[RMDB]
RNA sequence: GGGAACGACUCGAGUAGAGUCGAAAACGUGUCCGUCGGCGUAGCCGACAACAUGCCCAGGUAGCCCAGACCUUCAAGGCUACGGUGCGUUGCGCCGCACGGUCUGAUUCUUCACAACGACGUUCACAAGAUCGGAUCACUUUCGAGUGAUCCGAAAUAUUUAACAUUAAUUCGUUAAUGUUAAAUAAAAAGAAACAACAACAACAAC
Reactivity to 2A3 in 0.01 (KOAc 150mM, MgCl2 10mM, bicine 150mM(pH8.5), 24C), signal-to-noise 6, nucleotides 027 to 156: c020g000u010g000u050c090c090g000u010c000g020g000c210g150u180a080g020c010c010g040a000c000a000a000c000a000u080g020c000c000c000a020g070g000u000a000g000c010c050c120a040g020a030c030c000u030u030c040a020a020g010g010c000u000a010c010g000g000u020g010c020g030u060u220g100c050g030c060c000g020c010a010c030g010g000u000c000u010g010a030u100u080c070u150u120c080a060c040a180a090c090g160a030c040g060u070u120c090a070c020a160a080g050a170u040c000g010g010a000u000c000a000c000u030u090u110c150g060a010g000u000g000a000u000c000c000g000a000a000a000
Reactivity to DMS in 0.01 (KOAc 150mM, MgCl2 10mM, bicine 150mM(pH8.5), 24C), signal-to-noise 4, nucleotides 027 to 156: c040g010u000g020u000c040c060g010u000c000g020g020c010g030u010a140g020c010c000g030a050c010a040a020c010a010u000g020c030c010c050a150g000g010u000a060g030c060c050c120a130g000a070c030c010u000u010c100a100a230g020g000c010u000a020c010g020g040u010g020c050g000u000u020g010c030g020c150c020g000c020a080c040g010g020u000c030u000g020a180u000u000c050u010u000c060a140c080a090a110c050g000a130c030g000u000u000c020a070c040a090a140g010a130u000c010g010g000a030u000c000a010c000u000u000u010c230g010a060g040u000g000a020u000c000c000g000a000a010a020